[RMDB]
RNA sequence: GGGAACGACUCGAGUAGAGUCGAAAAGCCGGGGGCUAGAAGGCGAUCAGACACCACCGUAUUCCCGGCCGUAAACGGUGCCGCCCCGCGGCCGGCGCGCGCGUCCCGCCGGCCGCCCAGGGAAACCAUUAUUACCCUAUUUCGAUAGGGUAAUAAUAAAAGAAACAACAACAACAAC
Reactivity to 2A3 in 0.01 (KOAc 150mM, MgCl2 10mM, bicine 150mM(pH8.5), 24C), signal-to-noise 1, nucleotides 027 to 126: g000c010c000g000g000g010g030g000c060u100a120g050a160a060g090g010c040g040a100u200c080a010g030a070c010a020c060c010a000c000c020g020u030a120u010u050c000c000c000g000g010c000c000g060u120a030a090a070c050g000g020u030g080c050c020g010c010c000c010c010g000c000g040g040c010c010g070g000c050g030c040g000c000g010c020g060u080c020c000c000g000c020c050g000g000c000c000g000c010c010c010a020g000g000g000a060a000a000c060c030

The record gives the reactivity of an RNA of 177 nucleotides to 2A3. The reactions ran in a buffer of 150 mM KOAc, 10 mM MgCl2 and 150 mM bicine (pH 8.5), at 24 C. It was measured as part of the RMDB library RFM100.